[RMDB]
RNA sequence: GGGAACGACUCGAGUAGAGUCGAAAAGGCGAAUUGUAGUCUAUAGAGGCGUGAUCAGUGUGGGCGCUUGGGGCAAGUUCCUUGGAAGAGGACAGCAUGGAGGGUGAUACUCCCGUUCAUCCCUGAGUCGGCUAUAUAUCUUCGGAUAUAUAGCCGAAAAAGAAACAACAACAACAAC
Reactivity to 2A3 in 0.01 (KOAc 150mM, MgCl2 10mM, bicine 150mM(pH8.5), 24C), signal-to-noise 4, nucleotides 027 to 126: g050g000c030g030a040a040u090u120g020u090a070g030u020c020u030a110u030a120g090a030g020g050c050g030u090g040a070u070c090a040g060u010g000u060g090g030g000c040g030c010u030u040g010g000g000g030c010a030a050g050u140u040c000c000u000u020g040g010a080a040g050a010g070g020a020c020a010g020c020a070u100g010g030a020g020g020g000u030g020a010u030a090c020u030c000c000c010g010u030u040c010a070u040c000c000c000u020g020a040g100
Reactivity to DMS in 0.01 (KOAc 150mM, MgCl2 10mM, bicine 150mM(pH8.5), 24C), signal-to-noise 5, nucleotides 027 to 126: g010g020c030g010a100a100u020u020g020u010a120g010u000c050u020a140u020a090g020a100g000g010c060g000u010g000a070u020c050a080g010u010g030u010g010g010g010c080g010c080u010u030g000g010g010g000c100a060a060g010u030u000c010c010u000u010g010g070a130a060g000a050g000g010a040c090a090g000c100a060u010g010g010a060g000g000g010u000g000a080u010a060c070u010c010c020c030g000u010u000c070a080u020c010c010c020u010g010a140g010
An RNA of 177 nucleotides, treated with 2A3 and DMS and read out base by base. Source: RMDB libraries RFM100 and RFMREP, as collected in RNAgym. For 2A3 the reverse transcriptase was SuperScript II with manganese. The RNA was probed in 150 mM KOAc, 10 mM MgCl2 and 150 mM bicine (pH 8.5) at 24 C.